This 207-nucleotide RNA was probed chemically with 2A3 and DMS.
[RMDB]
RNA sequence: GGGAACGACUCGAGUAGAGUCGAAAAGCACUAGAGGGCGUAAUGGCUGGGUGUAACCCAACUCUAGGUGUGCUGAUUAGCGGGCUUGACUCCGUAACAAAUAGGCACUGGUGGUAAAAAGCAUCCCUGACCAUAUACAUCUUCGGAUGUAUAUGAAUCGAUUCCCUUAGUUCGCUAAGGGAAUCGAAAAAGAAACAACAACAACAAC
Reactivity to 2A3 in 0.01 (KOAc 150mM, MgCl2 10mM, bicine 150mM(pH8.5), 24C), signal-to-noise 1, nucleotides 027 to 156: g040c000a000c050u010a010g000a000g000g070g040c010g050u100a110a060u090g120g010c020u020g000g040g010u060g050u070a020a020c030c000c000a000a010c000u000c010u020a050g050g080u040g010u000g020c000u000g000a090u010u090a020g000c050g000g020g030c030u090u110g030a070c080u000c090c000g030u020a020a000c020a000a080a030u120a040g020g000c020a010c040u060g060g040u070g030g080u140a060a020a080a000a010g020c000a030u040c000c020c000u030g070a060c010c010a010u020a000u000a000c010a020u000c010u000u000c140g120g000a000u000g000u000a000u000a000u020g000a000a160
Reactivity to DMS in 0.01 (KOAc 150mM, MgCl2 10mM, bicine 150mM(pH8.5), 24C), signal-to-noise 1, nucleotides 027 to 156: g000c020a060c010u000a090g020a110g000g010g000c030g010u010a150a110u000g000g000c000u000g010g020g050u000g000u010a060a300c010c010c010a040a020c030u000c060u000a070g000g000u000g040u000g000c000u020g010a160u000u000a190g030c030g040g010g140c010u000u010g010a160c080u000c020c000g030u000a080a150c180a080a050a130u000a210g030g000c020a040c130u000g010g000u010g000g000u000a030a090a030a020a070g000c030a180u000c020c020c000u010g030a200c140c000a000u000a020u000a020c020a010u020c030u000u000c300g050g030a000u000g000u000a000u000a040u000g010a150a080